Conditions: 150 mM KOAc, 10 mM MgCl2 and 150 mM bicine (pH 8.5), 24 C. Chemical mapping of a 177-nucleotide RNA with DMS and 2A3. Values are in units of 0.01, from 0 to 300, in steps of 10. For 2A3 the reverse transcriptase was SuperScript II with manganese. DMS (dimethyl sulfate) methylates the pairing face of unpaired adenines and cytosines.

[RMDB]
RNA sequence: GGGAACGACUCGAGUAGAGUCGAAAAGCCGGCUAUAUACGUAAUGCAUCGAUCGUAGCCGAUCGAUUAAUUAUAGCAUCGGCGCGCCGUAGCUACGUAUAAUCGCGGCCGCGUACGCGAUAUUAUAAGGCACUACUACUUUCGAGUAGUAGUGCCUAAAAGAAACAACAACAACAAC
Reactivity to DMS in 0.01 (KOAc 150mM, MgCl2 10mM, bicine 150mM(pH8.5), 24C), signal-to-noise 1, nucleotides 027 to 126: g000c150c000g010g020c040u000a100u000a000u000a000c040g000u010a000a090u010g030c040a250u000c000g050a000u000c000g000u000a110g050c080c000g000a000u000c010g040a070u000u000a040a100u020u000a120u000a060g030c120a030u010c000g000g020c000g030c050g020c170c040g010u000a200g000c040u010a000c010g000u000a040u010a050a040u000c050g000c030g020g040c030c070g040c120g000u000a020c050g010c020g000a050u000a050u020u010a040u000a100
Reactivity to 2A3 in 0.01 (KOAc 150mM, MgCl2 10mM, bicine 150mM(pH8.5), 24C), signal-to-noise 2, nucleotides 027 to 126: g080c000c050g020g000c060u020a010u040a000u000a280c020g010u040a010a120u090g000c010a060u060c030g040a050u020c030g010u050a140g000c030c000g010a000u020c010g030a010u040u200a100a150u230u110a100u050a080g050c060a020u020c010g000g050c030g000c010g020c030c010g020u060a060g010c010u000a000c020g040u000a020u000a070a080u070c030g030c040g060g010c000c020g200c160g060u070a030c020g000c020g020a010u010a080u150u240a120u070a100